[RMDB]
RNA sequence: GGGAACGACUCGAGUAGAGUCGAAAACUGGUAUUCGUACCAGAAAAAGGGGUCCCAUACAUCGCUGAUGACCCUGAACUACUUCUGAAGCCUCCACGGAAGCAGGCAAGGCGAGUGUAUGGGACGGAGGCACCCAAAAAAGACAGUUCGCUGUCAAUCAAUAGCGACAAUUCGUUGUCGCUAUUGAAAAAGAAACAACAACAACAAC
Reactivity to 2A3 in 0.01 (KOAc 150mM, MgCl2 10mM, bicine 150mM(pH8.5), 24C), signal-to-noise 3, nucleotides 027 to 156: c010u000g010g000u010a040u060u110c250g050u050a010c010c010a000g110a080a120a020a010a000g010g000g000g010u020c000c000c000a000u010a000c010a010u040c020g000c020u050g030a300u060g010a120c000c010c000u000g000a020a030c040u140a040c000u160u020c000u010g010a030a010g010c000c000u010c000c000a020c010g010g000a000a000g010c000a000g010g010c040a040a100g010g000c010g020a020g110u050g000u010a000u010g000g010g000a000c010g000g000a000g000g000c000a020c000c010c010a060a110a030a000a000a030g000a000c010a000g020u100u160c210g060c130u020g020u030c060a010a080
Reactivity to DMS in 0.01 (KOAc 150mM, MgCl2 10mM, bicine 150mM(pH8.5), 24C), signal-to-noise 2, nucleotides 027 to 156: c000u010g030g020u000a040u000u010c230g030u000a050c000c000a020g000a030a060a070a180a120g000g010g010g000u000c000c000c000a070u010a030c020a010u000c000g020c020u030g010a190u010g000a100c300c000c000u000g000a040a100c120u000a300c010u000u000c020u010g000a080a300g010c050c010u000c020c000a300c000g020g000a020a010g000c020a030g000g010c030a060a070g030g030c030g020a000g000u000g020u000a030u000g000g000g000a030c020g000g010a000g030g050c010a100c010c000c010a000a020a090a130a080a080g000a020c010a030g000u010u000c120g060c020u010g030u000c000a080a160